[RMDB]
RNA sequence: GGGAACGACUCGAGUAGAGUCGAAAAAAGAUGGUUGUGUGUGAUAAGGUACGUUCUCUCAAAUUGAGUGAUAAUAAUUGUUAUCUUAAUGCAGUUAUUAUGACACUUGAUUUAUUGAAGGACAUUAGAACCGACUGGUUCGCCAGUCGGAAAAGAAACAACAACAACAAC
Reactivity to DMS in 0.01 (KOAc 150mM, MgCl2 10mM, bicine 150mM(pH8.5), 24C), signal-to-noise 3, nucleotides 027 to 129: a160a150g010a000u020g060g000u020u100g080u010g030u090g030u030g040a080u020a110a110g050g010u060a100c190g030u000u000c020u050c090u030c140a020a000a080u090u000g010a040g000u040g040a100u060a060a000u000a000a000u090u000g050u100u080a190u040c220u110u070a110a100u050g000c000a030g010u030u020a050u010u010a010u000g020a150c030a040c040u090u080g020a010u040u000u030a030u000u040g050a030a120g000g040a070c020a080u020u110a070g020a060a090
Reactivity to 2A3 in 0.01 (KOAc 150mM, MgCl2 10mM, bicine 150mM(pH8.5), 24C), signal-to-noise 4, nucleotides 027 to 129: a000a000g150a060u160g020g010u050u050g060u010g090u010g030u010g060a080u040a120a080g110g020u070a050c100g000u050u000c000u000c020u000c050a010a000a000u020u030g000a000g020u000g010a000u000a010a010u030a000a030u000u000g020u060u080a130u150c160u140u270a160a070u190g030c000a000g010u020u010a000u000u000a020u100g120a050c000a000c000u000u000g010a010u010u000u050a100u020u090g040a020a000g010g000a010c010a000u040u150a030g050a060a010